[RMDB]
RNA sequence: GGGAACGACUCGAGUAGAGUCGAAAAGAUAUGGAAUACAGCAACAGCGUCAGGGUCGGAAACGACCCGACGACAUGCUGUUCCUAAGUCAAAUCAAGCUUGGGGAGUUCGCUCCCCAAGCUUGAAACAUGGCCAAUACGUUCGCGUAUUGGCCAUGAAAAGAAACAACAACAACAAC
Reactivity to DMS in 0.01 (KOAc 150mM, MgCl2 10mM, bicine 150mM(pH8.5), 24C), signal-to-noise 1, nucleotides 027 to 126: g000a020u000a300u010g000g000a010a040u000a130c030a050g000c000a000a040c260a150g020c000g020u000c000a160g030g010g000u010c000g000g010a070a030a180c000g010a000c000c010c000g010a000c010g010a030c050a210u000g010c010u000g000u000u000c010c010u000a050a090g020u000c030a080a080a110u010c010a020a000g030c000u010u020g010g000g020g000a050g010u000u010c300g020c000u000c000c000c010c010a000a000g000c000u000u000g000a010a040a130
Chemical mapping of a 177-nucleotide RNA with DMS. Values cover nucleotides 27 to 126.